Source: RMDB library OK1LIB, as collected in RNAgym.
Chemical mapping of a 177-nucleotide RNA with DMS and 2A3.
2A3 adducts were read by reverse transcription with SuperScript II with manganese.
RNA sequence: GGGAACGACUCGAGUAGAGUCGAAAACGUUGAGGGAGAGGUUUACCUCAUAUAAGGAUUUGAUGUCUGAGUAUGAUAACGAUAGUGUAUGCAUAUUGGUCGACUCACUUAUCAGUAAGAGAUAUUCCCUCUAUGACGACUUCGGUCGUCAUAGAGGAAAAGAAACAACAACAACAAC
Reactivity to DMS in 0.01 (KOAc 150mM, MgCl2 10mM, bicine 150mM(pH8.5), 24C), signal-to-noise 2, nucleotides 027 to 126: c120g000u010u010g000a040g000g010g000a100g000a190g000g000u000u010u020a050c020c140u000c060a050u000a060u020a110a250g000g000a170u000u070u030g050a070u020g000u000c010u030g000a220g000u000a030u000g010a030u010a040a200c120g020a080u000a050g030u040g020u050a040u020g010c030a040u000a060u000u000g000g000u020c000g000a110c020u000c000a080c000u000u000a050u000c050a120g020u040a060a040g000a050g010a100u000a070u050u070c060
Reactivity to 2A3 in 0.01 (KOAc 150mM, MgCl2 10mM, bicine 150mM(pH8.5), 24C), signal-to-noise 3, nucleotides 027 to 126: c090g020u020u080g000a020g000g100g000a090g030a060g110g010u080u060u120a090c000c000u000c000a010u050a000u000a070a030g080g010a060u050u070u200g050a060u140g090u020c080u020g020a020g020u020a020u070g080a080u020a160a050c060g000a050u120a050g130u150g040u090a060u140g140c070a070u040a070u040u070g070g010u050c030g010a010c010u000c000a000c000u040u060a060u100c030a020g080u130a130a000g010a000g000a080u080a060u090u110c020